Structure probing data (2A3 and DMS) for a 177-nucleotide construct. Reactivities are rounded to 0.1 and cut off at 0 and 3. For 2A3 the reverse transcriptase was SuperScript II with manganese. Reactivities are given for positions 27 through 126. The reactions ran in a buffer of 150 mM KOAc, 10 mM MgCl2 and 150 mM bicine (pH 8.5), at 24 C. DMS adducts were read by reverse transcription with MarathonRT. Source: RMDB library TTRDES, as collected in RNAgym.

RNA sequence: GGGAACGACUCGAGUAGAGUCGAAAAGAUAUGGAGAGGUACAGGGAGAAUCCCUUCGGAAACGAAGGAGAUUCGAGGAUCUGUCACCUCUCCUAAGUCAAAACCAUGGCUUCUUCGGAAGCCAUGGGAGUAAACGUAUGUUCGCAUACGUUUACUCAAAAGAAACAACAACAACAAC
Reactivity to 2A3 in 0.01 (KOAc 150mM, MgCl2 10mM, bicine 150mM(pH8.5), 24C), signal-to-noise 5, nucleotides 027 to 126: g010a010u040a030u160g000g000a010g000a000g020g000u040a010c010a000g020g030g010a120g020a030a000u020c000c000c000u000u000c010g020g030a070a040a030c010g000a000a010g040g030a300g000a020u010u000c010g010a060g000g020a040u020c010u010g020u030c060a060c010c010u000c010u000c000c000u000a010a000g010u000c010a010a010a060a120c010c000a000u000g000g020c000u000u010c010u040u070c300g200g010a020a000g030c040c000a000u000g000g020
Reactivity to DMS in 0.01 (KOAc 150mM, MgCl2 10mM, bicine 150mM(pH8.5), 24C), signal-to-noise 7, nucleotides 027 to 126: g000a020u000a300u000g000g000a020g010a020g000g010u000a030c000a010g010g010g010a050g000a030a010u000c010c000c000u000u000c010g010g000a100a080a170c000g020a020a010g000g000a130g020a000u000u000c000g000a100g020g000a050u010c000u000g010u000c210a040c010c000u010c010u000c000c000u000a000a070g000u010c020a100a070a100a300c010c000a000u000g000g010c000u000u000c000u000u020c240g020g000a010a000g010c000c000a000u000g000g000